RNA sequence: GGGAACGACUCGAGUAGAGUCGAAAAUACCGUGCGCGACUCACUGAUGACCCUGACAACGCUGUACCCACCGGUCGCAGCGGUGGUCAGCCUGUGGACCCAGCAGUGCUAUGGCGAGCAGGUAGCACCCUCCUCUGAGUUUCGACUCAGAGGAGGGAAAAGAAACAACAACAACAAC
Reactivity to DMS in 0.01 (KOAc 150mM, MgCl2 10mM, bicine 150mM(pH8.5), 24C), signal-to-noise 1, nucleotides 027 to 126: u000a070c060c010g060u020g010c040g020c040g020a100c160u000c030a030c000u000g010a070u000g000a200c040c030c050u000g000a070c070a070a080c070g010c000u000g010u030a030c180c010c010a080c220c090g010g000u000c160g000c030a110g050c000g010g010u000g020g030u000c020a020g000c090c110u020g000u010g000g060a060c120c050c050a060g000c010a020g000u010g020c300u000a000u000g000g020c000g010a050g000c070a120g000g010u000a030g000c140a090
Reactivity to 2A3 in 0.01 (KOAc 150mM, MgCl2 10mM, bicine 150mM(pH8.5), 24C), signal-to-noise 1, nucleotides 027 to 126: u030a030c000c000g150u110g040c040g010c020g060a060c000u010c040a010c030u010g040a040u010g020a090c060c000c030u030g030a040c040a090a010c020g000c000u020g030u070a050c020c000c010a080c060c070g000g120u170c160g030c070a050g140c070g000g000u030g020g010u040c000a000g030c020c020u170g030u180g000g060a030c000c010c090a040g000c020a000g050u010g010c040u090a100u170g040g000c010g010a010g000c000a000g020g000u040a010g050c010a080
An RNA of 177 nucleotides, treated with DMS and 2A3 and read out base by base.
Values cover nucleotides 27 to 126.
For DMS the reverse transcriptase was MarathonRT.